[RMDB]
RNA sequence: GGGAACGACUCGAGUAGAGUCGAAAAACCAUGAUCAAGUCAUGGCUCAGCUCGUGAUGGAUCUUGCCCACGCCGUAGCGCUCAGCUCAGCCGCCGGCAAGGCAGCCGGCACAGCCCUAGCCGUCAAAUGGCAUAUCGUUUUCGAACGAUAUGCCAUAAAAGAAACAACAACAACAAC
Reactivity to 2A3 in 0.01 (KOAc 150mM, MgCl2 10mM, bicine 150mM(pH8.5), 24C), signal-to-noise 1, nucleotides 027 to 126: a000c010c000a030u050g000a050u130c240a170a100g060u040c010a010u070g020g000c000u040c090a020g030c050u070c100g030u020g040a020u060g010g030a050u000c000u020u120g000c000c010c000a020c060g020c030c000g050u070a020g010c020g000c100u090c120a040g030c020u010c050a010g050c030c040g010c000c000g040g000c010a020a050g080g030c010a020g030c000c000g020g020c000a010c000a000g010c010c020c000u080a030g020c000c010g080u070c010a040a020
Reactivity to DMS in 0.01 (KOAc 150mM, MgCl2 10mM, bicine 150mM(pH8.5), 24C), signal-to-noise 2, nucleotides 027 to 126: a210c040c000a040u000g010a030u010c170a160a140g070u000c000a020u000g000g010c010u010c190a200g020c000u020c080g030u000g010a040u000g020g000a070u010c050u010u000g000c010c010c000a130c300g000c020c020g000u000a040g010c030g040c100u000c110a130g000c040u020c060a060g000c050c050g050c070c060g010g010c030a040a070g000g000c110a130g000c040c020g020g020c020a090c060a030g010c000c020c010u010a050g000c020c000g020u000c070a040a060